[RMDB]
RNA sequence: GGGAACGACUCGAGUAGAGUCGAAAAGCGGCCCUCGGCGAACAGGUGCAGGUCGACCUCGCCCAGGGUGGGCAGGAAUCGGUACGCAUCGGCCACGGUGUGUGGCUCGCAACCUUCAUAGGUCACCUCGAGCGUGUAAUUUCGAUUACACGCUCGAAAAAGAAACAACAACAACAAC
Reactivity to DMS in 0.01 (KOAc 150mM, MgCl2 10mM, bicine 150mM(pH8.5), 24C), signal-to-noise 2, nucleotides 027 to 126: g020c020g000g020c000c000c000u000c090g000g020c010g000a170a080c110a080g010g010u000g000c000a280g050g010u000c030g020a030c000c000u000c210g000c000c000c000a140g050g000g050u000g000g010g010c000a020g010g010a140a060u000c060g020g040u020a080c110g010c060a020u000c030g020g030c060c060a040c010g020g030u010g000u010g000u010g000g000c000u000c030g000c050a100a050c070c020u000u010c160a090u000a120g010g000u020c060a140c070c040
Reactivity to 2A3 in 0.01 (KOAc 150mM, MgCl2 10mM, bicine 150mM(pH8.5), 24C), signal-to-noise 2, nucleotides 027 to 126: g030c020g000g060c000c020c030u020c070g070g000c010g030a120a040c030a220g080g000u040g070c060a070g030g090u010c010g010a030c010c010u030c120g010c000c000c040a080g200g100g190u290g040g050g000c020a040g090g000a100a180u090c030g010g050u060a090c070g000c040a000u020c000g010g000c020c000a040c070g010g140u070g030u020g010u080g100g010c060u080c050g010c000a000a000c000c000u140u160c090a100u170a180g020g020u020c010a060c090c010
Overview: This 177-nucleotide RNA was probed chemically with DMS and 2A3. For 2A3, 1,331 sequencing reads were counted. The RNA was probed in 150 mM KOAc, 10 mM MgCl2 and 150 mM bicine (pH 8.5) at 24 C. For DMS the reverse transcriptase was MarathonRT.